[RMDB]
RNA sequence: GGGAACGACUCGAGUAGAGUCGAAAACUGACCGCCAACCUGAAUGACACACUGACAUUCAAGGACUGUGUUAUUUUGGACAUUGAAAAUAGCAGUACCUAUCGGAUUCCUGUUCAGGCUUCCGGAACUCUGUCGUGUCAUUCGUGACACGACAGAGAAAAGAAACAACAACAACAAC
Reactivity to DMS in 0.01 (KOAc 150mM, MgCl2 10mM, bicine 150mM(pH8.5), 24C), signal-to-noise 1, nucleotides 027 to 126: c030u010g010a110c050c040g010c100c050a070a090c070c020u000g010a040a010u000g060a060c060a040c030a030c070u000g010a110c200a130u030u010c110a090a050g010g000a070c050u000g020u000g030u000u010a000u000u010u000u010g000g010a130c210a130u010u020g000a030a010a050a060u000a070g000c020a020g010u010a090c040c000u010a170u000c040g020g010a100u000u020c010c030u000g020u000u010c080a050g010g000c070u000u000c030c000g010g020a120a140
Reactivity to 2A3 in 0.01 (KOAc 150mM, MgCl2 10mM, bicine 150mM(pH8.5), 24C), signal-to-noise 2, nucleotides 027 to 126: c000u020g090a070c020c050g030c060c030a080a030c000c000u020g040a020a000u040g000a020c010a010c010a000c070u080g100a040c000a100u090u110c070a160a050g030g020a040c030u020g000u030g030u120u020a070u010u020u010u060g040g060a050c070a100u070u240g090a080a090a010a070u050a030g010c020a000g000u100a180c000c000u050a070u150c010g000g000a010u030u050c000c000u050g090u070u130c070a000g020g010c000u060u010c000c010g050g000a040a030